[RMDB]
RNA sequence: GGGAACGACUCGAGUAGAGUCGAAAAGUUCGGGCCUUCGGGCCCGAACAAAUAAUCCAGCCUGGAAACGCUGGAGCCUAAACUAUGGAAAAGGCACCAUAGAAACCACAUGGUUCGCCAUGUGGAACAUACGUUAUGCCUUCGGGCAUAACGUAUGAAAAGAAACAACAACAACAAC
Reactivity to DMS in 0.01 (KOAc 150mM, MgCl2 10mM, bicine 150mM(pH8.5), 24C), signal-to-noise 1, nucleotides 027 to 126: g020u000u000c040g000g030g000c010c000u000u020c180g000g060g020c020c040c000g000a000a000c000a010a040a010u000a100a100u010c010c000a000g020c010c040u000g000g020a180a150a150c110g030c000u000g000g000a050g000c000c000u000a070a030a120c020u000a010u000g000g000a060a090a090a110g000g020c220a170c000c000a020u000a010g000a180a070a230c020c000a010c000a030u000g000g000u010u010c220g020c010c000a010u000g000u000g030g000a100a070